[RMDB]
RNA sequence: GGGAACGACUCGAGUAGAGUCGAAAAAGAACUAGCGAUUGUAAAAGGCUGUUUGCGCUAAGAUAUGGAAUUAGCCCAAAUAGGUCCGAAUUCCUUGAUAACAUUUCGGACAACCGCGCUAAAACAAACGAUAGCAUGGAUUCGUCCAUGCUAUCGUAAAAGAAACAACAACAACAAC
Reactivity to DMS in 0.01 (KOAc 150mM, MgCl2 10mM, bicine 150mM(pH8.5), 24C), signal-to-noise 2, nucleotides 027 to 126: a130g050a070a150c060u000a020g000c010g020a130u010u000g010u020a020a040a160a100g000g000c000u010g040u000u000u000g010c300g010c000u000a020a020g010a110u000a200u010g020g000a040a130u000u000a010g000c010c060c010a000a020a010u000a020g000g000u000c010c010g010a030a010u010u000c040c070u010u010g020a100u020a080a050c200a070u000u000u000c000g000g010a050c000a020a070c020c070g000c010g000c080u000a080a040a080a110c250a100a130
Reactivity to 2A3 in 0.01 (KOAc 150mM, MgCl2 10mM, bicine 150mM(pH8.5), 24C), signal-to-noise 1, nucleotides 027 to 126: a030g080a060a000c010u010a020g000c010g020a030u040u240g040u170a070a140a040a040g080g010c000u010g080u010u000u020g000c020g000c000u020a010a010g030a080u160a130u210g160g000a090a110u000u000a020g010c000c020c000a000a000a020u100a010g000g110u000c010c000g010a020a030u040u040c040c000u050u080g060a040u030a140a000c030a100u020u000u050c010g000g020a030c010a010a040c030c040g000c000g000c020u060a190a160a020a050c060a030a140